[RMDB]
RNA sequence: GGGAACGACUCGAGUAGAGUCGAAAAACUCUACCAGAGGUUUGUGAAGUACCGUCAUCUAUCUGGUUGGAAUCUACCUCCUCUAAUUCUCAAGGGGGUUUAUUCGAGAUUAUUGAGAAUCGUUGGUUUCCAUAGAUGUUCUUAGCUGAGGAAAUGCCCUUUAAUUAGUGUUCGCACUAAUUAAAGGAAAAGAAACAACAACAACAAC
Reactivity to DMS in 0.01 (KOAc 150mM, MgCl2 10mM, bicine 150mM(pH8.5), 24C), signal-to-noise 1, nucleotides 027 to 156: a020c000u000c020u020a130c010c020a110g020a170g030g000u010u000u000g010u010g010a100a120g010u010a160c050c070g010u000c080a060u000c140u000a030u000c030u000g010g030u000u000g030g010a040a010u010c030u000a060c000c010u000c000c000u000c010u000a020a070u000u000c000u000c000a040a020g030g010g000g020g020u000u000u000a000u000u010c010g020a300g020a040u010u010a030u000u000g000a010g000a030a020u000c180g030u000u000g010g000u010u000u000c010c010a120u000a120g000a130u000g060u000u010c060u000u000a100g020c090u010g000a100g000g020a050a050a110u000g070c080
Reactivity to 2A3 in 0.01 (KOAc 150mM, MgCl2 10mM, bicine 150mM(pH8.5), 24C), signal-to-noise 3, nucleotides 027 to 156: a000c010u030c010u010a000c010c000a020g010a040g080g020u070u170u130g060u060g060a060a030g050u070a060c030c040g090u080c050a110u070c100u230a100u000c020u040g050g000u040u020g040g010a000a020u000c000u010a020c000c000u010c030c000u000c010u050a130a110u160u010c010u030c040a010a010g040g000g000g000g000u010u030u020a020u000u010c000g010a010g010a080u100u270a030u210u260g010a030g020a010a020u040c040g000u020u060g050g020u020u050u000c020c010a020u040a070g060a070u110g050u130u060c030u050u160a070g020c070u070g040a050g060g020a050a060a090u100g000c010